Overview
Structure probing data (DMS and 2A3) for a 170-nucleotide construct. The data come from the RNA Mapping Database (RMDB), library 15KLIB. Conditions: 150 mM KOAc, 10 mM MgCl2 and 150 mM bicine (pH 8.5), 24 C. For DMS the reverse transcriptase was MarathonRT.

RNA sequence: GGGAACGACUCGAGUAGAGUCGAAAAAGCAACGGGGCUAGCUGCCGGGUGUUCCAUCCAUGGGAUCGGUGCCGAGUGAGGCUUAUCCCGGGGGUGACGCCUCGGUCCUCCCUUAGCAUCGGAGACCUCAGAGUAGGAUUCGUCCUACUCAAAAGAAACAACAACAACAAC
Reactivity to DMS in 0.01 (KOAc 150mM, MgCl2 10mM, bicine 150mM(pH8.5), 24C), signal-to-noise 9, nucleotides 027 to 129: a110g040c130a070a090c020g000g020g010g030c020u020a200g000c030u050g050c040c000g000g000g000u000g000u050u040c040c010a040u020c050c110a150u070g010g000g000a040u010c140g020g020u030g020c020c020g000a110g000u050g030a130g040g010c300u030u030a060u040c060c010c020g000g000g000g000g000u030g000a100c200g020c000c000u030c000g010g000u000c090c030u000c020c000c020u030u040a060g010c060a050u000c090g010g010a110g030a110c020c030u010c080a120
Reactivity to 2A3 in 0.01 (KOAc 150mM, MgCl2 10mM, bicine 150mM(pH8.5), 24C), signal-to-noise 9, nucleotides 027 to 129: a000g120c080a060a040c030g000g010g020g000c020u040a020g010c010u110g170c010c000g010g000g010u060g040u120u050c020c010a020u030c040c020a170u210g120g010g010a020u050c120g040g060u070g030c000c010g030a060g090u240g070a060g010g000c020u080u110a090u100c010c000c000g000g000g000g000g000u050g010a020c090g030c010c000u020c010g000g010u030c000c000u020c020c010c000u020u060a030g010c010a030u050c030g060g020a050g040a090c000c010u050c070a020